[RMDB]
RNA sequence: GGGAACGACUCGAGUAGAGUCGAAAAGAUAUGGAGCUCACAGAGCUUGGAUUUACGAGGUGGUCGGAAACGACCACGUAGUUGUCAGCUCUGGAGCUCCUAAGUCAAAGUAGGCUUCGGCCUACAAGAAGAGUUAAAUCUUCGGAUUUAACUCUUCAAAAGAAACAACAACAACAAC
Reactivity to DMS in 0.01 (KOAc 150mM, MgCl2 10mM, bicine 150mM(pH8.5), 24C), signal-to-noise 4, nucleotides 027 to 126: g010a050u010a300u000g000g000a020g020c010u000c020a100c020a010g000a010g000c000u000u010g020g010a020u000u010u000a000c020g000a230g010g000u010g000g000u000c000g010g000a090a110a170c000g010a010c000c010a000c000g000u000a300g010u000u000g000u000c010a030g000c010u000c000u000g000g000a020g010c000u000c000c000u000a010a040g010u010c040a080a080a150g010u000a010g010g000c000u000u020c170g030g010c000c000u000a010c010a060a090
Reactivity to 2A3 in 0.01 (KOAc 150mM, MgCl2 10mM, bicine 150mM(pH8.5), 24C), signal-to-noise 3, nucleotides 027 to 126: g020a000u070a060u150g000g010a000g010c000u010c010a300c010a060g010a010g000c040u120u190g130g020a060u300u300u220a010c010g000a050g170g000u010g010g010u010c000g000g000a060a070a060c020g000a000c040c060a000c000g000u010a000g010u000u010g000u000c010a000g000c000u010c010u010g000g000a000g000c000u000c000c000u000a000a000g010u010c020a000a050a030g000u010a000g010g000c000u040u040c250g170g010c000c010u000a000c000a000a010